[RMDB]
RNA sequence: GGGAACGACUCGAGUAGAGUCGAAAAUCGCUCUUACGAGCGAUGGAGGUUCGCAGGGUUGUUGUUCUGCAAAACACUCUUUUGACUUGGGAAUAGUGGUGAAAGGCCAAUCAAGGCCGGCGACAGCACUGCUACCAGAAUUCGUUCUGGUAGCAGUAAAAGAAACAACAACAACAAC
Reactivity to 2A3 in 0.01 (KOAc 150mM, MgCl2 10mM, bicine 150mM(pH8.5), 24C), signal-to-noise 1, nucleotides 027 to 126: u020c000g000c000u040c020u040u300a130c240g000a000g000c010g000a000u010g000g010a010g070g000u000u050c080g000c130a040g090g000g080u000u120g040u020u050g000u090u070c010u020g000c010a000a000a000a000c080a090c010u080c000u000u160u010u150g200a120c090u050u140g100g050g000a020a160u130a150g070u040g010g000u010g190a100a020a080g040g000c000c000a000a040u120c130a220a180g000g000c000c000g000g000c040g040a010c020a030g040c010
Reactivity to DMS in 0.01 (KOAc 150mM, MgCl2 10mM, bicine 150mM(pH8.5), 24C), signal-to-noise 2, nucleotides 027 to 126: u000c000g000c010u000c000u000u030a140c300g000a020g060c020g000a040u000g020g040a210g010g000u000u000c150g060c010a050g000g010g000u010u000g000u000u000g000u000u000c060u000g030c090a090a050a010a080c020a050c030u000c010u010u000u000u000g000a080c090u030u020g000g010g000a060a040u000a080g020u030g010g030u010g020a060a190a180g010g000c010c020a000a080u050c250a100a130g000g020c050c040g000g000c060g000a060c150a100g020c050